[RMDB]
RNA sequence: GGGAACGACUCGAGUAGAGUCGAAAAUGUGGAUUCGUCCACAAACUGGAUAUGGAUUAACAGAGGACCAUAGAUAAGCCUAGUCGGAAACGACUAGGGUUGCCUCUAUGAAGUCCGACGAAGUUAAUCCUAAGUCGUGAGCUGGCUUCGGCCAGAACUCGAAUAUCCCUUUCGAGGGAUAUUCGAGAAAAGAAACAACAACAACAAC
Reactivity to 2A3 in 0.01 (KOAc 150mM, MgCl2 10mM, bicine 150mM(pH8.5), 24C), signal-to-noise 1, nucleotides 027 to 156: u150g000u010g020g000a030u050u080c210g110u000c050c000a010c000a000a070a010c090u060g060g000a010u070a060u160g010g000a000u010u000a000a010c020a060g020a030g030g010a010c020c000a000u000a000g010a020u070a050a040g050c020c000u000a000g000u000c000g060g000a030a110a140c000g000a000c000u000a000g000g020g000u030u050g010c000c000u010c000u000a000u000g130a210a030g000u000c010c000g050a010c020g060a060a020g000u010u000a000a000u010c000c010u000a000a000g020u000c040g040u050g180a030g000c010u010g010g000c000u100u120c260g070g000c000c000a020g090a050a070